Description
Structure probing data (2A3 and DMS) for a 207-nucleotide construct. It was measured as part of the RMDB library M2RFOK. Values cover nucleotides 27 to 156. The 2A3 profile rests on 2,310 reads.

RNA sequence: GGGAACGACUCGAGUAGAGUCGAAAACGGUAUUGGUCAAGGCUAUACCGACAGCGCACCUUCAAAAGGGCGCUUAAUACCCGGCCAAGCGCCGAAAUAUGAAUAGACACCGCUGGGCUGGUAGGGCAAAACAUGGCGAUCUUCGGAUCGCCAUGAACAGUAUCAGAAAGUUCGCUUUCUGAUACUGAAAAGAAACAACAACAACAAC
Reactivity to 2A3 in 0.01 (KOAc 150mM, MgCl2 10mM, bicine 150mM(pH8.5), 24C), signal-to-noise 3, nucleotides 027 to 156: c010g000g000u020a030u040u230g040g020u070c060a100a080g070g020c000u010a000u010a030c000c020g030a030c030a020g000c010g000c050a300c060c010u060u080c100a050a100a030a030g000g000g000c010g000c000u000u000a000a000u010a010c000c000c000g020g010c000c010a030a010g030c000g020c070c020g080a010a080a010u260a110u120g080a080a080u100a100g080a040c050a020c040c020g000c000u050g020g000g040c000u010g000g070u040a050g040g020g030c030a040a020a060a050c020a020u010g000g000c000g000a010u000c010u050u040c130g050g000a000u000c000g000c000c000a000u000g000a000a000
Reactivity to DMS in 0.01 (KOAc 150mM, MgCl2 10mM, bicine 150mM(pH8.5), 24C), signal-to-noise 2, nucleotides 027 to 156: c020g020g030u010a040u000u010g070g040u000c040a120a170g040g020c000u000a090u000a090c050c000g030a130c140a090g010c060g030c030a110c020c000u010u000c180a080a110a130a080g000g000g030c010g000c050u000u000a010a120u000a080c050c020c000g040g000c040c050a060a060g000c040g040c000c020g010a020a090a060u010a120u000g030a140a180u010a180g000a110c020a060c070c050g010c000u000g010g010g000c010u000g000g000u010a050g010g000g040c040a070a050a100a250c000a040u000g010g030c000g010a020u000c000u010u000c300g040g010a020u000c000g010c020c000a000u000g000a020a130